[RMDB]
Structure probing data (DMS) for a 177-nucleotide construct.
The data come from the RNA Mapping Database (RMDB), library OK2TST.
The RNA was probed in 150 mM KOAc, 10 mM MgCl2 and 150 mM bicine (pH 8.5) at 24 C.
Values cover nucleotides 27 to 126.
RNA sequence: GGGAACGACUCGAGUAGAGUCGAAAAGUUCUGUGGCUGCUGGACCCAAGCUCCUCCCACGGCCGCAGCCAUCUUGCCCGUGCGUCCGUGGCACGGAACGGCCGUUAGUCCCGGCAGAGGGCUCCGCAGGUGGCUGAAUAUUCGUAUUCAGCCACCUAAAAGAAACAACAACAACAAC
Reactivity to DMS in 0.01 (KOAc 150mM, MgCl2 10mM, bicine 150mM(pH8.5), 24C), signal-to-noise 2, nucleotides 027 to 126: g010u010u000c050u010g020u000g000g010c010u000g000c050u010g030g000a110c010c060c070a110a080g010c070u000c020c020u000c120c020c040a060c160g000g000c010c020g020c050a040g010c070c040a070u010c060u000u010g010c090c010c020g030u000g010c050g020u000c090c100g000u000g000g000c010a050c010g030g000a080a090c030g010g020c020c020g040u000u000a120g000u020c060c150c000g020g000c040a080g010a120g020g000g040c110u010c100c020g020c180